The record gives the reactivity of an RNA of 207 nucleotides to DMS.

[RMDB]
RNA sequence: GGGAACGACUCGAGUAGAGUCGAAAAACAUAGGUGGCCUCCUUACGAGGAGGCCACUUAUGAAACACUCUCUAUCAGAAUGAAUUCUUGCUGUAAUAACAGAUAGAGUAGGUUGUUACAGACUAAAAUACGUGUGCAUUCUUCGGAAUGCACACAAUCUAAAGAGUGUGUUCGCACACUCUUUAGAAAAAGAAACAACAACAACAAC
Reactivity to DMS in 0.01 (KOAc 150mM, MgCl2 10mM, bicine 150mM(pH8.5), 24C), signal-to-noise 1, nucleotides 027 to 156: a280c010a020u000a010g000g030u000g030g020c010c010u000c010c000u000u000a040c220g030a060g060g010a020g030g010c030c000a000c010u010u000a000u000g000a120a100a150c010a070c030u000c010u010c000u000a000u000c030a160g010a130a160u000g010a110a160u010u000c130u000u010g010c000u000g010u000a050a030u000a050a060c020a100g030a120u000a060g000a080g000u010a060g050g000u010u010g010u000u000a060c060a060g040a160c070u000a040a080a120a120u010a060c110g030u010g030u000g000c000a020u000u000c010u000u000c300g020g000a020a010u000g020c000a000c000a000c070a000a060